[RMDB]
RNA sequence: GGGAACGACUCGAGUAGAGUCGAAAAACAGAAAAAAGGAGUUUAAAUUAGAUUUGCAAACGGACGGUACUAAAUACCGUCACUUUCACGUCUAACUUAUCGUUAACUCUGCAAAAAGAAAACAAGAAAAACAAGCGUGAGUUCGCUCACGCUUGAAUCUUAUACUAUACUUCGGUAUAGUAUAAGAAAAAGAAACAACAACAACAAC
Reactivity to DMS in 0.01 (KOAc 150mM, MgCl2 10mM, bicine 150mM(pH8.5), 24C), signal-to-noise 1, nucleotides 027 to 156: a170c000a250g000a000a040a010a050a180a300g000g010a030g090u000u000u000a030a000a010u000u000a030g000a020u000u040u000g030c070a000a010a020c150g000g120a000c000g040g000u000a030c100u030a100a040a300u000a060c010c000g000u000c000a020c000u000u000u020c000a000c090g000u000c000u000a040a020c020u000u000a070u070c180g020u030u000a050a050c140u000c000u000g000c070a070a140a150a110a120g010a050a030a020a120c070a060a030g000a060a120a070a220a050c000a000a000g060c040g010u000g000a060g000u000u010c300g030c000u000c000a000c000g080c010u000u000g000a000a070
Reactivity to 2A3 in 0.01 (KOAc 150mM, MgCl2 10mM, bicine 150mM(pH8.5), 24C), signal-to-noise 2, nucleotides 027 to 156: a000c040a020g110a010a100a000a010a030a060g050g010a050g000u080u110u160a030a060a030u030u010a000g000a000u000u010u080g020c080a000a020a040c080g040g000a020c000g010g030u010a030c110u260a140a100a070u060a020c000c000g010u000c010a000c010u020u000u040c010a000c010g000u010c010u010a020a010c000u110u070a040u160c020g110u070u050a000a010c010u010c020u020g000c020a000a100a020a050a000g120a010a100a000a050c080a080a040g130a120a070a040a010a000c000a000a000g010c000g000u000g000a020g000u010u110c180g010c100u000c010a000c000g030c000u000u000g010a000a010
Record summary:
This 207-nucleotide RNA was probed chemically with DMS and 2A3. The 2A3 profile rests on 1,150 reads. 2A3 is a SHAPE reagent: it acylates the 2'-hydroxyl of flexible nucleotides of all four kinds. Source: RMDB library M2RFOK, as collected in RNAgym. The RNA was probed in 150 mM KOAc, 10 mM MgCl2 and 150 mM bicine (pH 8.5) at 24 C. For 2A3 the reverse transcriptase was SuperScript II with manganese. The DMS profile rests on 1,343 reads.